This 207-nucleotide RNA was probed chemically with 2A3. The RNA was probed in 150 mM KOAc, 10 mM MgCl2 and 150 mM bicine (pH 8.5) at 24 C.
RNA sequence: GGGAACGACUCGAGUAGAGUCGAAAAGGGGUCAGGACGAGGUUUAGGACAUGGACGUACUGAAGCCUCCACGGUAUGGUCCAACAGCCUAAACUCCCCACCGUCCUGACGGAGGCACCCAAAACCGGUAGAUCGGAUUCGUCCGAUCUACCGGUAAGACAUAGGGGUAGUUCGCUACCCCUAUGUCAAAAGAAACAACAACAACAAC
Reactivity to 2A3 in 0.01 (KOAc 150mM, MgCl2 10mM, bicine 150mM(pH8.5), 24C), signal-to-noise 1, nucleotides 027 to 156: g120g020g020g010u010c010a000g000g000a000c000g000a000g000g000u010u000u010a030g000g010a160c130a260u140g030g000a010c010g000u010a020c000u020g040a120a040g000c000c000u000c010c000a000c000g000g000u010a000u130g210g010u030c010c000a040a060c070a110g020c000c010u000a000a010a000c010u010c030c030c010c010a020c020c000g000u000c000c000u000g000a000c000g000g000a000g000g000c000a020c010c000c000a050a000a030a110c000c000g000g000u000a000g000a000u000c000g020g000a010u010u090c220g060u080c050c010g010a010u000c000u000a000c000c010g000g000u000a000a000